Structure probing data (2A3 and DMS) for a 207-nucleotide construct. It was measured as part of the RMDB library OK3TST. 2A3 adducts were read by reverse transcription with SuperScript II with manganese. For DMS, 3,918 sequencing reads were counted.
[RMDB]
RNA sequence: GGGAACGACUCGAGUAGAGUCGAAAACAAAGUGCUGGGAUUACAGGCGUGAGCCACUUCGCCCUGCCCUCCUAUGAGUCUUUAAUGCCAAGGAUGCUUUGUCAAGAUAAAGGCUCACGUCCAUUUCAGUGUCAACUGUCAGGGACUCAGCUGCAGAGUUUUAAAUGGAGUUCGCUCCAUUUAAAACAAAAGAAACAACAACAACAAC
Reactivity to 2A3 in 0.01 (KOAc 150mM, MgCl2 10mM, bicine 150mM(pH8.5), 24C), signal-to-noise 4, nucleotides 027 to 156: c030a010a080a020g080u080g020c000u010g010g000g070a100u050u140a120c050a130g010g010c010g010u010g000a000g000c010c010a070c030u050u050c020g010c010c000c010u010g000c030c020c010u010c000c010u150a260u100g050a070g090u060c060u070u200u170a230a090u140g010c000c010a020a000g010g010a040u040g020c020u040u030u060g070u190c020a030a000g010a070u150a160a070a000g000g000c000u000c000a000c000g020u010c010c010a030u040u070u020c010a000g010u010g160u140c070a080a040c050u040g050u090c040a030g020g020g050a060c030u020c080a030g020c020u040g000c030a010g050a020
Reactivity to DMS in 0.01 (KOAc 150mM, MgCl2 10mM, bicine 150mM(pH8.5), 24C), signal-to-noise 2, nucleotides 027 to 156: c050a040a070a100g020u010g030c030u010g020g000g020a120u000u010a080c100a080g020g030c030g030u000g000a050g030c000c020a040c090u000u020c060g010c010c000c000u010g050c040c050c080u000c030c020u000a080u000g020a170g020u000c020u010u020u000a110a090u010g010c060c040a110a090g030g010a130u010g020c030u010u030u000g000u010c060a060a080g010a110u010a050a090a110g030g030c000u000c020a020c050g010u010c010c120a060u000u010u000c020a050g020u000g020u020c100a050a130c070u000g010u010c040a090g000g010g010a090c030u000c030a070g010c010u010g000c060a110g000a190